[RMDB]
RNA sequence: GGGAACGACUCGAGUAGAGUCGAAAAACAUGCUGGCCAACCCAACCCCACAAUCCUCCAUCGGCAUGAUCAUGAUGUGUUCUCAAAUAUCAGGCCAGUAAAUCACCAUGCUCGUGCUGGUAAAGGCAACUUAUGCCCAAGUUCGCUUGGGCAUAAACGCUAUAUAAUGCUUCGGCAUUAUAUAGCGAAAAGAAACAACAACAACAAC
Reactivity to 2A3 in 0.01 (KOAc 150mM, MgCl2 10mM, bicine 150mM(pH8.5), 24C), signal-to-noise 4, nucleotides 027 to 156: a000c040a020u060g000c000u000g000g010c000c010a050a050c070c040c030a030a070c050c010c020c000a050c060a050a120u120c030c020u030c050c020a030u030c010g000g000c000a000u010g010a010u030c000a010u000g050a040u080g030u000g020u070u030c050u030c040a060a120a020u230a080u140c100a110g010g000c000c000a000g000u030a000a040a040u080c010a010c030c000a000u010g010c000u000c000g000u000g010c010u010g010g000u040a120a090a010g030g000c010a060a040c040u030u010a010u000g000c000c000c000a010a010g010u030u030c110g010c140u000u010g010g000g020c000a000u000a000a000a000
Reactivity to DMS in 0.01 (KOAc 150mM, MgCl2 10mM, bicine 150mM(pH8.5), 24C), signal-to-noise 1, nucleotides 027 to 156: a090c100a090u010g000c000u000g000g020c000c040a180a170c100c020c040a130a130c030c010c000c010a060c100a120a160u010c020c000u000c020c070a040u010c040g000g010c000a000u000g010a030u010c060a040u010g000a020u030g020u000g030u020u000c040u020c020a100a070a180u010a130u000c090a130g010g020c000c020a010g000u000a020a070a090u010c040a030c010c010a070u000g010c100u000c010g030u000g000c000u000g020g000u000a030a040a060g000g030c130a030a060c140u000u000a020u000g000c000c000c000a020a010g020u000u000c280g040c020u000u000g010g000g060c010a000u000a000a030a160